[RMDB]
Chemical mapping of a 177-nucleotide RNA with DMS and 2A3. The 2A3 profile rests on 1,456 reads. 2A3 adducts were read by reverse transcription with SuperScript II with manganese.

RNA sequence: GGGAACGACUCGAGUAGAGUCGAAAAACGACGCCACCGGACACAAAUCUCUCGUUUUAGAAAAUGGCGUUGCAGGCAGUGGAUUUGUUGCUGAGGGUGAUGCGGACGGAUUGACUCAACGCAAUGCGUACUCCCCUCCUUUCGAGGAGGGGAGUACAAAAGAAACAACAACAACAAC
Reactivity to DMS in 0.01 (KOAc 150mM, MgCl2 10mM, bicine 150mM(pH8.5), 24C), signal-to-noise 2, nucleotides 027 to 126: a130c010g000a050c120g000c020c020a020c030c030g000g000a090c090a060c110a000a050a030u000c020u000c070u000c080g000u040u020u020u040a170g000a050a030a040a120u050g010g010c070g020u070u000g010c080a020g030g030c120a040g010u000g000g010a050u010u010u010g000u030u010g040c020u000g000a230g010g020g020u000g000a090u050g020c080g000g010a020c050g020g000a170u010u010g010a050c010u000c010a050a080c150g030c060a090a110u000g000c150
Reactivity to 2A3 in 0.01 (KOAc 150mM, MgCl2 10mM, bicine 150mM(pH8.5), 24C), signal-to-noise 3, nucleotides 027 to 126: a010c010g010a010c020g000c020c000a010c040c000g090g040a020c000a000c010a040a050a070u040c080u020c000u030c050g000u020u000u040u180a170g070a070a090a020a030u210g090g000c060g020u050u070g000c030a050g050g000c020a010g000u040g070g020a040u040u000u030g090u060u030g080c070u050g070a110g010g050g040u060g000a040u220g010c030g030g030a000c010g050g010a020u000u080g040a030c000u030c080a070a000c040g010c030a040a070u080g060c040